This 177-nucleotide RNA was probed chemically with 2A3 and DMS. For DMS the reverse transcriptase was MarathonRT. The DMS profile rests on 1,843 reads. The RNA was probed in 150 mM KOAc, 10 mM MgCl2 and 150 mM bicine (pH 8.5) at 24 C. For 2A3, 2,262 sequencing reads were counted. Source: RMDB library OK2TST, as collected in RNAgym.
RNA sequence: GGGAACGACUCGAGUAGAGUCGAAAACACAAGGCCGAGUACGACGCGAACCUCGCGAAGUUCGUCGCGUCGAUGAAGCCGAUCGACGCGAAGGUGGCCGGGCUGCGCGCGCGCUACAAGGGCGUGACUAUCCUCGGGAUUUCGAUCCCGAGGAUAGAAAAGAAACAACAACAACAAC
Reactivity to 2A3 in 0.01 (KOAc 150mM, MgCl2 10mM, bicine 150mM(pH8.5), 24C), signal-to-noise 1, nucleotides 027 to 126: c080a010c000a050a040g070g000c020c040g020a030g040u020a030c100g030a030c000g020c020g010a140a130c040c080u070c030g030c020g010a030a010g010u040u030c030g030u010c000g040c000g000u000c020g000a000u010g060a080a020g110c010c020g040a000u000c000g010a010c000g000c010g000a040a010g100g100u130g010g000c010c090g000g010g000c060u140g000c000g000c010g000c030g000c000g000c050u070a080c030a130a100g070g010g000c000g000u000g020a020
Reactivity to DMS in 0.01 (KOAc 150mM, MgCl2 10mM, bicine 150mM(pH8.5), 24C), signal-to-noise 2, nucleotides 027 to 126: c060a100c090a140a170g020g010c030c020g010a290g000u000a070c040g000a280c020g030c000g010a070a100c220c130u040c070g020c040g000a090a210g000u010u000c000g000u000c000g040c000g000u000c000g000a000u000g000a070a080g010c090c070g000a020u000c010g010a030c000g000c000g010a020a100g010g000u010g000g010c070c020g020g000g000c040u000g000c050g020c050g010c020g000c030g000c020u000a020c150a050a110g000g000g010c050g000u000g020a220